[RMDB]
Source information:
Source: RMDB library OK2TRN, as collected in RNAgym. An RNA of 177 nucleotides, treated with DMS and 2A3 and read out base by base. The reactions ran in a buffer of 150 mM KOAc, 10 mM MgCl2 and 150 mM bicine (pH 8.5), at 24 C. 2A3 adducts were read by reverse transcription with SuperScript II with manganese. The 2A3 profile rests on 1,320 reads. Reactivities are rounded to 0.1 and cut off at 0 and 3.
RNA sequence: GGGAACGACUCGAGUAGAGUCGAAAAGUCGCCGCCGCCGAUAAUCAGCACAUGUUUCGCGUGACCAUGGGCCAGUAGCGGAACAUGGGUCAUCAUCUCAUGAUAGAUAAACUCGUCGCGCUCGGUGGUUAUCGGCUCAUUUCGAUGAGCCGAUAACAAAAGAAACAACAACAACAAC
Reactivity to DMS in 0.01 (KOAc 150mM, MgCl2 10mM, bicine 150mM(pH8.5), 24C), signal-to-noise 2, nucleotides 027 to 126: g010u000c060g000c000c030g030c300c020g000c030c020g000a050u000a090a080u010c120a110g010c070a130c030a000u000g040u000u000u000c050g040c010g020u000g000a060c010c010a140u010g010g060g030c010c040a120g020u000a180g040c050g000g000a020a010c010a020u000g000g020g020u000c040a070u000c100a040u000c130u000c110a080u010g020a080u000a120g010a070u000a070a060a090c130u000c050g010u000c040g010c170g030c070u000c080g000g010u000g010
Reactivity to 2A3 in 0.01 (KOAc 150mM, MgCl2 10mM, bicine 150mM(pH8.5), 24C), signal-to-noise 1, nucleotides 027 to 126: g000u000c010g020c080c000g000c040c000g010c000c000g040a020u080a090a040u130c040a040g050c030a000c000a050u020g010u010u030u000c030g040c040g060u050g080a020c000c030a180u120g040g000g040c000c040a100g060u150a020g000c030g000g000a000a000c010a000u010g050g000g090u060c000a070u000c020a030u010c030u050c090a170u130g070a080u060a100g020a030u060a050a050a050c020u050c040g070u030c050g000c020g020c070u000c030g060g000u050g040